[RMDB]
Chemical mapping of a 207-nucleotide RNA with 2A3 and DMS. 2A3 adducts were read by reverse transcription with SuperScript II with manganese. Conditions: 150 mM KOAc, 10 mM MgCl2 and 150 mM bicine (pH 8.5), 24 C. The DMS profile rests on 6,416 reads. Source: RMDB library RNAMAK, as collected in RNAgym. The 2A3 profile rests on 5,188 reads.

RNA sequence: GGGAACGACUCGAGUAGAGUCGAAAACAACAUUCGUGUUGCACUCGUCCUAAGUCUUCCCGAGGAAUUGAGGUACGACGAAGGUGGUCGGAAACGACCACCAGAGUACCCAAUUCCGUUUGACGGAAGAUAUGGAAUAUGACGCCUUCGGGCGUAAUGAAAGCAUGUUUUUCGAAACAUGCUUUCAAAAAGAAACAACAACAACAAC
Reactivity to 2A3 in 0.01 (KOAc 150mM, MgCl2 10mM, bicine 150mM(pH8.5), 24C), signal-to-noise 5, nucleotides 027 to 156: c020a000a020c020a060u100u200c190g080u060g010u070u040g020c100a050c120u060c040g060u040c010c000u050a140a070g030u010c010u000u000c000c000c000g000a060g000g000a010a010u010u060g050a210g100g000u010a030c060g140a040c030g050a280a040g000g000u000g010g000u000c000g010g000a090a080a080c000g000a000c000c000a010c000c000a000g000a000g000u000a000c000c000c000a000a000u000u010c000c000g000u100u120u160g040a010c000g000g000a000a000g000a000u010a020u040g000g050a050a020u180a180u290g100a030c000g010c010c010u060u080c180g110g000g000c000g000u030a000a050
Reactivity to DMS in 0.01 (KOAc 150mM, MgCl2 10mM, bicine 150mM(pH8.5), 24C), signal-to-noise 3, nucleotides 027 to 156: c020a050a120c060a120u000u000c110g050u030g020u000u010g040c010a130c110u000c060g000u020c010c040u020a050a300g020u000c010u000u030c000c000c000g000a140g010g000a020a010u000u000g030a180g030g020u000a000c000g010a300c150g020a170a180g020g040u000g010g030u000c000g010g020a120a130a300c010g000a020c000c000a020c010c010a010g000a260g000u000a010c000c000c000a000a030u000u000c000c000g030u020u000u010g020a130c170g000g000a040a010g010a040u000a300u020g010g000a030a100u000a130u000g000a050c000g010c000c010u000u000c300g070g020g050c000g010u000a040a080